[RMDB]
RNA sequence: GGGAACGACUCGAGUAGAGUCGAAAAAACACUGGACAGCAGUUUCGCCUUAGUAUGGGACUCUGUGACCAGUGGAGUCCAAUCCGUGUCGAGUGUGAGACAGCUAUUCAUCUCAGACAAUGAAUAAUACGUAUGCUAGGUUCGCCUAGCAUACGUAAAAAGAAACAACAACAACAAC
Reactivity to 2A3 in 0.01 (KOAc 150mM, MgCl2 10mM, bicine 150mM(pH8.5), 24C), signal-to-noise 5, nucleotides 027 to 126: a020a000c010a000c000u000g010g020a050c100a130g010c000a010g020u010u000u020c220g210c010c000u200u070a140g100u200a200u250g010g000g030a000c010u010c000u000g070u060g060a050c000c010a000g020u000g000g010a030g020u000c020c000a020a040u060c070c050g060u020g010u040c020g020a030g030u190g020u020g030a030g040a060c030a040g090c030u070a100u060u030c040a050u020c020u020c060a030g020a050c060a050a090u060g050a020a050u150a150a040
Reactivity to DMS in 0.01 (KOAc 150mM, MgCl2 10mM, bicine 150mM(pH8.5), 24C), signal-to-noise 3, nucleotides 027 to 126: a040a060c030a010c010u000g000g000a090c170a300g020c030a000g020u010u000u000c010g020c150c030u010u060a150g020u060a160u060g000g000g010a060c020u010c000u000g000u000g000a200c020c000a010g000u000g000g010a120g000u010c030c040a140a100u010c110c080g030u020g020u000c010g010a050g000u030g020u000g020a080g000a200c190a090g000c150u030a050u000u000c020a030u020c010u030c040a110g000a040c110a050a100u010g000a060a080u020a120a090